[RMDB]
RNA sequence: GGGAACGACUCGAGUAGAGUCGAAAAGACGUUUCUCAUGAGACUUCUGACGACGAGUGGGCUGCUGCAGUUGAUGAAGCGUUCCCUCUCGAUGAAGCAGAAGAUGUUACUGAAUCUGUGCAAGAAGGAGGAUCUCAGUUCGCUGAGAUCAAAAGAAACAACAACAACAAC
Reactivity to DMS in 0.01 (KOAc 150mM, MgCl2 10mM, bicine 150mM(pH8.5), 24C), signal-to-noise 9, nucleotides 027 to 129: g010a060c080g010u030u000u010c000u000c090a180u050g000a070g000a120c000u010u000c000u020g030a240c070g000a070c000g010a000g000u000g010g000g030c300u040g020c020u010g040c040a000g020u070u050g030a120u040g000a070a040g000c020g020u040u060c000c000c000u000c000u000c020g040a110u040g000a160a120g030c010a020g000a030a020g020a070u000g010u020u010a100c120u000g000a080a040u010c040u010g030u060g000c020a050a030g000a070a060g000g010a040g000
Reactivity to 2A3 in 0.01 (KOAc 150mM, MgCl2 10mM, bicine 150mM(pH8.5), 24C), signal-to-noise 9, nucleotides 027 to 129: g090a010c090g010u030u070u000c050u010c030a080u190g060a020g040a090c000u010u000c000u010g050a080c040g000a000c020g010a010g010u050g000g030g000c050u080g000c010u050g010c050a100g030u190u160g110a230u070g030a070a000g000c000g020u140u150c000c020c000u000c000u000c000g100a130u120g060a060a020g000c010a000g010a020a000g030a030u130g050u130u130a110c080u040g030a040a040u000c020u040g050u050g050c050a030a040g020a040a030g080g040a050g030
An RNA of 170 nucleotides, treated with DMS and 2A3 and read out base by base. Values cover nucleotides 27 to 129. Source: RMDB library 15KLIB, as collected in RNAgym. Conditions: 150 mM KOAc, 10 mM MgCl2 and 150 mM bicine (pH 8.5), 24 C.